[RMDB]
RNA sequence: GGGAACGACUCGAGUAGAGUCGAAAAUUGACUUCACAAAAGCAGCUGGAAACGGACAACCAUAAUAUGCAUAAAUCUAACUCCUACCAUCGGCUACACACUGCUUGACACAUAUUGUUAGAAGCACUUAAUGGAGACCAUUCGUGGUCUCCAUUAAAAAAGAAACAACAACAACAAC
Reactivity to DMS in 0.01 (KOAc 150mM, MgCl2 10mM, bicine 150mM(pH8.5), 24C), signal-to-noise 5, nucleotides 027 to 126: u020u030g000a100c040u010u000c040a060c090a080a060a080a090g000c040a040g020c030u000g010g010a050a080a100c100g000g000a040c110a070a090c070c020a050u040a070a080u020a060u020g010c090a060u010a050a060a060u020c060u030a100a160c060u010c010c000u000a100c080c050a100u010c050g010g000c020u010a040c060a040c060a060c040u000g000c000u000u000g000a050c150a080c130a070u010a090u010u010g020u000u010a100g000a070a080g000c090a060c190
Reactivity to 2A3 in 0.01 (KOAc 150mM, MgCl2 10mM, bicine 150mM(pH8.5), 24C), signal-to-noise 4, nucleotides 027 to 126: u030u050g020a020c010u030u000c060a000c000a070a110a010a050g020c020a010g000c030u050g040g050a100a050a020c030g000g080a010c020a060a060c000c020a010u070a170a090u110a110u140g020c060a040u080a100a170a030u080c050u070a040a060c020u020c010c020u020a080c010c010a080u050c010g010g000c020u070a030c030a000c000a000c050u010g000c000u030u090g020a010c010a000c020a110u090a020u170u050g030u010u060a020g030a090a010g030c020a000c030
Overview
Structure probing data (DMS and 2A3) for a 177-nucleotide construct. The RNA was probed in 150 mM KOAc, 10 mM MgCl2 and 150 mM bicine (pH 8.5) at 24 C. For DMS the reverse transcriptase was MarathonRT.